[RMDB]
RNA sequence: GGGAACGACUCGAGUAGAGUCGAAAAUUAGUCCUUGCGCGUGAUUAUAGGCAUCUCCACGAAUCUGAGGUGGUACGGAUUUCAGGUGGAGCAUUCGUAUAAGGAAUCGUAGAUUAUGGAGAGGUGGCGCUAAUGGCAUCUUCGGAUGCCAUUAGCGAAAAGAAACAACAACAACAAC
Reactivity to DMS in 0.01 (KOAc 150mM, MgCl2 10mM, bicine 150mM(pH8.5), 24C), signal-to-noise 1, nucleotides 027 to 126: u080u030a150g000u000c040c000u020u000g000c030g000c020g020u000g010a150u000u060a020u000a070g000g000c080a200u000c050u020c000c000a020c300g030a010a060u000c000u010g000a080g000g060u000g010g010u000a000c030g000g000a020u000u010u050c080a150g030g040u060g000g080a020g000c300a060u000u040c000g090u030a080u020a140a010g000g000a150a050u010c050g010u000a020g000a080u030u000a100u020g000g000a040g010a020g010g020u020g020g010
Reactivity to 2A3 in 0.01 (KOAc 150mM, MgCl2 10mM, bicine 150mM(pH8.5), 24C), signal-to-noise 2, nucleotides 027 to 126: u030u010a000g060u020c010c000u000u100g030c090g000c000g000u090g040a140u180u060a030u130a160g150g030c000a040u000c000u000c000c000a000c040g040a000a030u000c000u000g000a000g160g040u150g040g040u000a040c000g010g000a000u070u070u070c070a080g020g300u100g090g000a000g020c000a000u040u040c000g140u060a110u020a080a010g070g000a060a090u040c100g000u060a030g060a130u010u000a000u200g050g060a050g010a000g140g000u060g030g000